[RMDB]
Structure probing data (2A3) for a 207-nucleotide construct. Conditions: 150 mM KOAc, 10 mM MgCl2 and 150 mM bicine (pH 8.5), 24 C. The 2A3 profile rests on 679 reads.
RNA sequence: GGGAACGACUCGAGUAGAGUCGAAAAACACCAAAACUGAAAACGGAAGGCAAUCCUUCCACGACGAUACUUACUUUCCUUUGAUCGUCGUUACUACUGGCAUAGCCACAAAGGACAACAAACAUGAGCGCGGACACUGACUUCGGUCAGUGUCCAAGAACUCAUGCCUGUUCGCAGGCAUGAGUUCAAAAGAAACAACAACAACAAC
Reactivity to 2A3 in 0.01 (KOAc 150mM, MgCl2 10mM, bicine 150mM(pH8.5), 24C), signal-to-noise 2, nucleotides 027 to 156: a010c080a130c080c030a120a070a020a020c000u260g060a050a070a030a020c060g010g020a000a000g020g020c130a060a160u300c000c010u020u010c000c010a030c010g000a000c000g000a000u100a230c010u080u000a040c050u140u070u050c060c000u080u070u010g010a010u000c010g040u000c000g000u070u010a090c050u060a050c020u010g000g010c050a220u090a210g010c070c000a070c050a040a130a000g040g010a020c030a190a000c000a020a200a000c030a080u110g030a040g060c090g010c060g030g000a000c000a000c000u000g000a000c000u030u070c080g100g020u000c000a000g000u000g000u000c010c000a000a000